[RMDB]
RNA sequence: GGGAACGACUCGAGUAGAGUCGAAAAAAUUGUUGUCUUGGGACAAAUGGAAUGGAAGGAGUAAAAGGACAUCAGUGCUCCCCCCAUGACAACUUUUAGGCAGAAAAGGGGUCCACAGCUCUGUCCAAACCCCAUGAAUUUUCGAAUUCAUGGGGUUAAAAGAAACAACAACAACAAC
Reactivity to DMS in 0.01 (KOAc 150mM, MgCl2 10mM, bicine 150mM(pH8.5), 24C), signal-to-noise 2, nucleotides 027 to 126: a040a050u020u010g000u010u000g020u000c010u010u000g010g000g010a240c080a030a130a120u000g020g010a130a110u000g000g000a150a120g010g010a060g020u020a040a050a130a060g000g010a060c120a040u000c090a100g040u000g010c020u020c010c010c100c010c020c010a020u000g000a010c030a020a030c000u000u010u000u010a110g010g030c050a040g000a010a070a130a200g000g000g040g020u000c020c090a100c040a090g010c180u000c050u010g010u000c020c110a110
Overview
This 177-nucleotide RNA was probed chemically with DMS. It was measured as part of the RMDB library OK2TRN. Conditions: 150 mM KOAc, 10 mM MgCl2 and 150 mM bicine (pH 8.5), 24 C.